This 177-nucleotide RNA was probed chemically with DMS. Values cover nucleotides 27 to 126. It was measured as part of the RMDB library OK1LIB.
[RMDB]
RNA sequence: GGGAACGACUCGAGUAGAGUCGAAAAGAGAAGAAGAAGAAGAGAACAACAACACUCACUCACUCACAAACAACUCUUCUUCUUCUUCUCAAAAGUGAGUGAGUGAGUGUGAGUGAGUGACAACAAGGGGUAUUACUAUCUUCGGAUAGUAAUACCCAAAAGAAACAACAACAACAAC
Reactivity to DMS in 0.01 (KOAc 150mM, MgCl2 10mM, bicine 150mM(pH8.5), 24C), signal-to-noise 2, nucleotides 027 to 126: g000a060g000a000a020g000a010a030g000a000a000g030a040a030g030a050g020a170a120c210a100a020c300a170a090c040a010c050u020c000a010c000u000c000a000c000u000c000a050c060a100a030a150c190a040a100c070u000c010u000u000c000u000u010c000u000u000c000u010u000c000u000c060a010a020a100a050g010u010g000a010g000u000g000a000g010u000g000a000g010u000g000u030g000a060g000u000g040a080g000u000g030a100c150a040a050c210a120a070g000